[RMDB]
Record summary
This 177-nucleotide RNA was probed chemically with DMS and 2A3. It was measured as part of the RMDB library M2PK50. Conditions: 150 mM KOAc, 10 mM MgCl2 and 150 mM bicine (pH 8.5), 24 C.
RNA sequence: GGGAACGACUCGAGUAGAGUCGAAAACACACAAGGUUCGCCUUGUGUGCAAGAAUAGACGAAAACUACCGUAGAAGUAUUCAGGUCACAUAACUACGGAAAUGGCGUUCUGCUUCGGCAGAACGAAUGUAAGAAAGGCGUUCGCGCCUUUCUUACAAAAAGAAACAACAACAACAAC
Reactivity to DMS in 0.01 (KOAc 150mM, MgCl2 10mM, bicine 150mM(pH8.5), 24C), signal-to-noise 1, nucleotides 027 to 126: c010a000c000a040c000a010a000g010g000u020u020c270g000c010c000u010u000g000u000g000u000g040c000a030a080g010a110a050u000a050g030a140c130g000a100a070a060a080c080u000a090c000c000g000u000a020g010a110a170g010u000a010u010u000c160a060g040g010u000c080a060c070a080u000a060a110c020u000a020c000g000g000a070a020a020u010g000g000c000g030u030u000c000u020g000c000u000u000c130g030g000c000a000g010a000a000c000g000a010a020
Reactivity to 2A3 in 0.01 (KOAc 150mM, MgCl2 10mM, bicine 150mM(pH8.5), 24C), signal-to-noise 1, nucleotides 027 to 126: c000a000c000a000c000a030a000g040g050u060u080c120g140c050c000u020u000g000u000g000u000g040c020a030a010g090a030a060u080a070g110a000c050g040a040a120a050a000c050u080a060c000c020g020u010a050g010a210a030g070u030a090u050u210c060a090g000g110u090c060a090c000a090u150a120a090c000u020a020c000g050g020a020a050a060u170g080g040c000g000u020u000c000u000g000c020u000u050c080g060g030c000a000g000a000a000c000g000a000a000